[RMDB]
Record summary:
The record gives the reactivity of an RNA of 207 nucleotides to 2A3 and DMS. For 2A3 the reverse transcriptase was SuperScript II with manganese.
RNA sequence: GGGAACGACUCGAGUAGAGUCGAAAAUCUAAUAGUAUGGACAGCACUAAUAGUCCUUGGCUUGAACUGUUUAGAGUUACGCAAAAUAAAUGCAUUUGAUAUUUCUGAUUCCCUGUUCCUAAGAGGCAAGGAGUUUAGUGACUCUAUAUAUGAUACACAUACCCGUACGAUUCGUCGUACGGGUAUGAAAAGAAACAACAACAACAAC
Reactivity to 2A3 in 0.01 (KOAc 150mM, MgCl2 10mM, bicine 150mM(pH8.5), 24C), signal-to-noise 3, nucleotides 027 to 156: u020c010u020a030a040u040a140g070u030a010u050g020g040a030c030a060g040c010a030c040u010a010a040u050a130g150u000c010c000u010u030g040g040c000u050u050g020a070a030c010u010g060u140u100u140a040g020a000g020u060u030a040c030g010c030a000a070a050a100u200a050a080a050u080g070c050a060u050u070u130g100a070u070a080u070u190u020c060u050g050a070u030u040c030c050c000u040g020u020u070c010c010u100a140a030g030a030g100g000c010a020a000g030g000a020g010u030u020u020a010g000u000g120a100c000u000c000u010a010u000a000u020a010u120g090a040u210a060c070a000
Reactivity to DMS in 0.01 (KOAc 150mM, MgCl2 10mM, bicine 150mM(pH8.5), 24C), signal-to-noise 2, nucleotides 027 to 156: u010c030u000a100a130u000a100g010u000a030u000g020g000a040c080a130g010c020a150c030u000a060a090u000a100g010u000c010c020u000u000g000g000c020u030u000g020a090a060c100u000g000u000u000u000a120g020a060g020u010u000a050c100g020c090a040a040a050a090u000a060a090a130u010g010c090a120u010u000u000g020a130u000a050u000u010u010c060u010g000a150u000u000c010c010c040u000g020u000u000c020c050u010a100a300g010a090g010g000c000a020a050g000g000a080g010u000u000u020a020g020u000g010a130c040u010c010u000a020u000a040u000a050u010g010a130u000a110c070a140

High 2A3 reactivity points to a flexible backbone, as in loops and unpaired stretches. For 2A3, 1,685 sequencing reads were counted.